[RMDB]
RNA sequence: GGGAACGACUCGAGUAGAGUCGAAAACAUGGAGUGUUCGCACUCCAUGAAAAUGCGCACGGCAGGGCAAGACGGGCCGACGUCAAUAAAUGCCGUAAUAAAAAAUCUAUCUGUUCGCAGAUAGAAACAUAAUAUUACUGUUCGCAGUAAUAUUAUGAAAAGAAACAACAACAACAAC
Reactivity to DMS in 0.01 (KOAc 150mM, MgCl2 10mM, bicine 150mM(pH8.5), 24C), signal-to-noise 6, nucleotides 027 to 126: c000a000u000g000g010a020g030u000g020u000u010c210g030c000a010c000u010c000c000a000u000g000a030a060a060a090u000g010c060g010c140a050c030g000g010c020a040g000g010g020c080a080a130g000a030c010g000g000g020c090c100g000a090c020g000u000c020a070a070u010a070a060a090u010g000c010c010g010u000a100a070u020a010a040a060a070a090a080u000c000u000a000u000c000u000g000u010u010c180g010c010a000g000a010u000a010g000a030a070a130
Reactivity to 2A3 in 0.01 (KOAc 150mM, MgCl2 10mM, bicine 150mM(pH8.5), 24C), signal-to-noise 6, nucleotides 027 to 126: c000a000u000g000g000a000g010u010g010u080u160c150g070c080a000c000u000c000c000a000u000g000a000a000a000a030u080g000c050g000c010a010c020g000g010c010a020g060g040g000c060a070a060g010a020c010g020g090g060c050c050g110a150c010g010u010c030a040a090u090a180a080a030u030g010c000c010g010u020a020a090u130a030a100a020a010a000a030u000c000u000a010u000c010u000g060u050u060c200g000c070a000g000a000u000a000g010a010a010a000
Structure probing data (DMS and 2A3) for a 177-nucleotide construct. Source: RMDB library M2PK50, as collected in RNAgym. Values cover nucleotides 27 to 126. Conditions: 150 mM KOAc, 10 mM MgCl2 and 150 mM bicine (pH 8.5), 24 C. For DMS, 9,846 sequencing reads were counted.